The record gives the reactivity of an RNA of 207 nucleotides to DMS and 2A3. Values cover nucleotides 27 to 156. Reactivities are rounded to 0.1 and cut off at 0 and 3. For DMS the reverse transcriptase was MarathonRT.

RNA sequence: GGGAACGACUCGAGUAGAGUCGAAAACGCUAUGCUGAUAGCGCGCUCGCAAUCCACGGACAUAGUUUGCGAAACAUCGCGAACGGGUACGUUGGCGAGGAAGAUCAUCAAGAAGAUGGAAGACAUGAUCGUCAACGGCUACGGACAGGUAGUCUACUCGAACUAAACCAUUCGUGGUUUAGUUCGAAAAAGAAACAACAACAACAAC
Reactivity to DMS in 0.01 (KOAc 150mM, MgCl2 10mM, bicine 150mM(pH8.5), 24C), signal-to-noise 2, nucleotides 027 to 156: c020g050c000u000a040u000g040c060u000g000a060u000a010g000c000g010c030g000c090u000c000g000c020a130a130u000c000c070a110c030g000g000a060c060a260u000a130g020u000u000u000g000c020g070a180a120a200c150a220u000c000g020c000g000a010a030c000g020g010g030u000a010c060g000u000u010g040g030c000g000a050g050g010a040a090g000a100u010c030a060u010c050a070a210g010a210a170g020a160u000g000g020a090a130g000a100c040a050u010g030a100u010c020g060u000c020a040a050c050g000g010c000u000a060c000g000g010a150c080a100g000g020u000a140g020u010c040u000a080c150
Reactivity to 2A3 in 0.01 (KOAc 150mM, MgCl2 10mM, bicine 150mM(pH8.5), 24C), signal-to-noise 5, nucleotides 027 to 156: c010g010c020u030a010u140g080c080u110g090a090u050a060g000c000g010c010g000c010u030c010g010c020a040a120u070c080c020a020c110g070g000a020c030a070u110a050g020u000u010u010g010c000g040a090a070a070c120a150u170c010g000c020g000a050a000c000g030g000g050u130a160c010g000u020u070g020g010c000g010a000g020g060a030a000g020a070u040c000a000u010c050a110a100g100a050a040g010a190u060g010g040a020a030g060a070c030a060u090g040a070u020c020g040u030c050a020a040c000g000g000c020u100a040c020g000g090a020c030a040g070g070u030a020g010u000c030u060a030c050